[RMDB]
RNA sequence: GGGAACGACUCGAGUAGAGUCGAAAAUUAAAGGUGGUGGUGGAGGAGGUACGCCUCCAGCUGCUCAGCCGACGUACCGCACACACGCCUUUUCGGCAAAGAGCAGCAAUAGGGUAUCCAUAAAAAACAUGCACAAAAUGUUCGCAUUUUGUGCAUGAAAAGAAACAACAACAACAAC
Reactivity to 2A3 in 0.01 (KOAc 150mM, MgCl2 10mM, bicine 150mM(pH8.5), 24C), signal-to-noise 1, nucleotides 027 to 126: u130u070a140a020a040g050g020u050g000g030u060g040g070u040g010g000a010g000g000a020g000g010u000a000c020g030c000c000u000c000c000a030g000c000u000g040c010u010c020a010g000c020c010g020a020c030g010u010a020c000c040g000c040a040c000a010c000a040c190g070c010c100u130u140u060u020c000g000g010c000a090a150a070g000a010g000c020a000g000c020a010a070u060a040g080g020g000u050a060u030c030c020a000u230a050a130a000a000a000a020
Reactivity to DMS in 0.01 (KOAc 150mM, MgCl2 10mM, bicine 150mM(pH8.5), 24C), signal-to-noise 2, nucleotides 027 to 126: u030u020a070a100a090g010g030u000g000g040u000g010g030u000g000g000a040g000g000a060g020g010u000a040c110g010c010c000u000c020c030a120g020c010u000g000c010u000c000a070g010c000c000g000a110c160g000u000a030c080c030g000c120a110c200a120c200a080c090g010c070c150u000u010u020u010c000g000g000c020a100a090a090g010a000g000c000a000g000c020a010a010u000a050g000g000g000u010a070u000c040c020a060u040a000a020a040a100a080a130